[RMDB]
This 207-nucleotide RNA was probed chemically with 2A3 and DMS. The RNA was probed in 150 mM KOAc, 10 mM MgCl2 and 150 mM bicine (pH 8.5) at 24 C. For 2A3, 4,784 sequencing reads were counted. For DMS the reverse transcriptase was MarathonRT. The data come from the RNA Mapping Database (RMDB), library M2RFPK.
RNA sequence: GGGAACGACUCGAGUAGAGUCGAAAAGAGCGAUGAGACAAAGGGGUAGAGCUACAUAUUAGAUAGCUGUAUAAUCGUUCAAGUUACAUCAAAACAUCUUCAAUAUUUAUUACUUACUUUCCUUUCUGCCAGAGUACGGUAUUCGUACCGUACUCAAUGAACAGGUUAUAUUCGUAUAACCUGUUCAAAAAGAAACAACAACAACAAC
Reactivity to 2A3 in 0.01 (KOAc 150mM, MgCl2 10mM, bicine 150mM(pH8.5), 24C), signal-to-noise 7, nucleotides 027 to 156: g000a000g000c000g000a020u040g030a020g020a090c080a050a090a040g040g020g010g010u050a030g010a000g070c000u010a010c020a070u290a130u170u110a080g190a300u020a010g030c000u010g030u070a080u060a050a060u030c020g010u010u020c010a000a020g030u040u090a040c040a100u110c060a060a060a090a070c020a080u040c070u210u100c050a110a090u080a220u180u190u110a120u130u130a050c020u060u020a030c010u030u100u090c010c000u030u090u080c040u060g070c040c060a050g000a000g000u000a000c000g000g000u000a000u000u050c100g010u020a000c000c000g000u000a010c000u000c000a000a010
Reactivity to DMS in 0.01 (KOAc 150mM, MgCl2 10mM, bicine 150mM(pH8.5), 24C), signal-to-noise 3, nucleotides 027 to 156: g000a060g010c030g010a060u010g010a160g020a130c030a080a040a070g010g000g030g020u000a080g010a080g020c020u000a050c070a080u000a150u010u000a120g010a130u000a030g020c020u000g010u000a070u000a060a060u000c060g010u000u000c070a060a140g020u010u000a060c050a100u000c030a040a090a100a070c030a060u000c040u000u000c050a060a090u000a070u000u000u000a080u040u000a070c040u000u000a060c030u000u000u000c010c000u000u010u000c010u000g010c090c090a170g000a050g000u000a000c000g000g010u000a040u010u000c280g030u000a010c000c000g010u010a010c000u000c000a010a080